[RMDB]
RNA sequence: GGGAACGACUCGAGUAGAGUCGAAAAUGCUUUGGUGGUCAUACGCAUGAGUGAAUACUCCUUAUGUUUCACGAUUACUUGCUUACUUGAAGGCUGACACCAGGAGUGCUCCCUGUGUGUCUCAUAGCAGUGACGGAAUCUUCGGAUUCCGUCACUGAAAAGAAACAACAACAACAAC
Reactivity to DMS in 0.01 (KOAc 150mM, MgCl2 10mM, bicine 150mM(pH8.5), 24C), signal-to-noise 2, nucleotides 027 to 126: u000g020c040u020u010u000g000g020u000g000g030u000c040a020u000a100c290g010c060a040u000g020a190g000u010g020a090a050u010a060c040u000c150c170u000u030a050u030g000u010u000u000c040a040c050g000a120u010u000a050c070u000u010g000c060u000u000a110c100u010u000g010a060a070g010g020c090u010g010a050c020a000c010c000a050g010g010a150g020u020g040c290u000c030c000c010u000g000u000g010u000g000u000c010u010c030a070u010a090g000
Reactivity to 2A3 in 0.01 (KOAc 150mM, MgCl2 10mM, bicine 150mM(pH8.5), 24C), signal-to-noise 1, nucleotides 027 to 126: u080g000c010u070u040u070g010g020u030g010g000u060c000a010u060a100c060g000c030a000u070g000a000g080u040g050a050a040u100a160c020u100c100c040u130u100a070u230g030u060u000u060c060a070c030g030a090u050u040a040c050u020u040g000c000u040u100a050c000u080u030g130a070a000g070g000c110u090g000a000c010a000c000c000a000g000g010a070g030u120g040c030u130c000c000c000u000g050u050g000u000g000u100c000u030c090a070u070a060g010
Background:
The data come from the RNA Mapping Database (RMDB), library OK2TST. The record gives the reactivity of an RNA of 177 nucleotides to DMS and 2A3. DMS adducts were read by reverse transcription with MarathonRT.